[RMDB]
An RNA of 177 nucleotides, treated with 2A3 and DMS and read out base by base.
For DMS the reverse transcriptase was MarathonRT.
The reactions ran in a buffer of 150 mM KOAc, 10 mM MgCl2 and 150 mM bicine (pH 8.5), at 24 C.

RNA sequence: GGGAACGACUCGAGUAGAGUCGAAAAAAAGUACUUACAAAUAUACUUGCCUUCAAAUUCUCAAUUAAUUUAGUCAUUACAAAUCAUGACAUAAAACUUACAUUACAUAUAUCAACAUGUUCCGCUAAUCUAUCCCUCGAUUCGUCGAGGGAUAGAUAAAAGAAACAACAACAACAAC
Reactivity to 2A3 in 0.01 (KOAc 150mM, MgCl2 10mM, bicine 150mM(pH8.5), 24C), signal-to-noise 3, nucleotides 027 to 126: a000a000a000g070u040a050c040u080u050a100c090a060a150a020u180a020u020a020c010u000u030g020c000c020u030u150c020a040a090a170u240u050c030u010c060a090a130u050u150a070a160u090u090u190a080g000u010c000a000u000u110a100c110a080a140a020u080c030a020u030g000a020c000a000u200a040a110a080a050c020u080u050a010c020a050u090u160a110c050a000u150a020u030a090u120c020a050a040c030a090u060g050u030u000c050c000g000c050u050a010
Reactivity to DMS in 0.01 (KOAc 150mM, MgCl2 10mM, bicine 150mM(pH8.5), 24C), signal-to-noise 1, nucleotides 027 to 126: a030a050a160g000u000a100c300u000u000a160c120a090a080a110u130a070u020a020c000u000u000g030c110c160u000u000c120a020a100a070u020u000c030u000c030a040a000u030u000a000a030u000u000u080a130g000u000c000a000u000u000a210c200a020a100a020u080c030a000u000g000a080c000a120u030a000a000a030a120c250u020u030a070c050a030u000u070a040c010a020u130a080u000a080u020c030a070a050c190a000u000g000u000u000c050c000g040c000u050a080